[RMDB]
RNA sequence: GGGAACGACUCGAGUAGAGUCGAAAACUUGCAUUGAUUACGUCCCUGCCCUUUGUACACACCGCCCGUCGCACCUACCGAUUGGAUAUUGUGACGAACCUUGCAGAGUGAGUUCUAUUCAGCAAUGUUACCUGUAGACUUUCGAGUCUACAGGUAAAAAAGAAACAACAACAACAAC
Reactivity to DMS in 0.01 (KOAc 150mM, MgCl2 10mM, bicine 150mM(pH8.5), 24C), signal-to-noise 7, nucleotides 027 to 126: c040u010u020g000c080a060u010u010g020a130u000u020a090c110g010u000c000c010c020u000g010c010c040c030u000u030u000g030u020a050c110a070c060a080c060c050g000c040c030c030g000u010c040g010c060a050c100c070u000a100c110c030g000a090u020u010g010g000a090u010a090u010u010g000u010g000a080c070g020a070a080c070c030u000u000g010c050a060g010a090g010u010g010a130g020u000u000c030u000a060u010u010c030a080g020c090a050a060u020g010
Reactivity to 2A3 in 0.01 (KOAc 150mM, MgCl2 10mM, bicine 150mM(pH8.5), 24C), signal-to-noise 8, nucleotides 027 to 126: c010u020u090g010c020a100u050u100g040a070u160u150a070c050g050u040c010c000c000u020g000c020c000c000u030u030u110g060u070a020c040a000c010a020c040c020g020c010c000c000g020u020c010g000c020a050c010c020u050a080c020c020g100a130u060u140g030g000a030u060a050u080u120g020u050g040a020c030g020a030a050c000c020u030u050g020c040a020g020a040g100u060g030a040g030u090u000c040u050a120u070u090c020a020g020c030a060a070u130g040
Overview:
Structure probing data (DMS and 2A3) for a 177-nucleotide construct. Conditions: 150 mM KOAc, 10 mM MgCl2 and 150 mM bicine (pH 8.5), 24 C. DMS adducts were read by reverse transcription with MarathonRT. Values cover nucleotides 27 to 126.